[RMDB]
RNA sequence: GGGAACGACUCGAGUAGAGUCGAAAAGCUGUUUUCCGCCUUUCUGGAUGGGCUCAAACAGGUCGGUGCGCAGGCGCAGCCGCUGGGUGUUGAAGCCGAGCUUGCGCGCGGCGAUCUCGAAGCGGCACUCGGAUUUAAUGUUCGCAUUAAAUCCGAGAAAAGAAACAACAACAACAAC
Reactivity to DMS in 0.01 (KOAc 150mM, MgCl2 10mM, bicine 150mM(pH8.5), 24C), signal-to-noise 3, nucleotides 027 to 126: g000c010u000g020u000u000u010u000c070c100g010c030c020u010u000u010c240u000g010g020a090u000g010g000g010c050u000c100a040a040a060c080a020g010g010u010c050g020g020u000g010c030g010c020a020g000g020c050g000c240a090g010c010c020g030c010u000g010g020g010u000g000u000u000g000a210a250g010c000c010g010a050g030c010u000u000g020c080g000c010g010c010g000g020c020g000a080u000c020u010c020g000a100a060g020c000g000g020c030a250
Reactivity to 2A3 in 0.01 (KOAc 150mM, MgCl2 10mM, bicine 150mM(pH8.5), 24C), signal-to-noise 2, nucleotides 027 to 126: g040c000u000g020u030u020u030u030c040c010g000c010c020u070u290u120c100u130g130g030a150u100g070g030g000c020u040c150a040a050a010c020a000g060g060u050c050g010g000u060g020c010g000c030a040g030g000c040g040c070a060g000c000c000g000c010u020g030g000g030u090g010u120u220g110a060a020g000c010c000g000a020g000c010u030u030g000c040g000c000g000c000g040g030c070g000a020u000c010u000c020g020a060a010g020c000g030g000c000a030
Source: RMDB library OK2TST, as collected in RNAgym. The record gives the reactivity of an RNA of 177 nucleotides to DMS and 2A3. DMS adducts were read by reverse transcription with MarathonRT. The reactions ran in a buffer of 150 mM KOAc, 10 mM MgCl2 and 150 mM bicine (pH 8.5), at 24 C. Values cover nucleotides 27 to 126.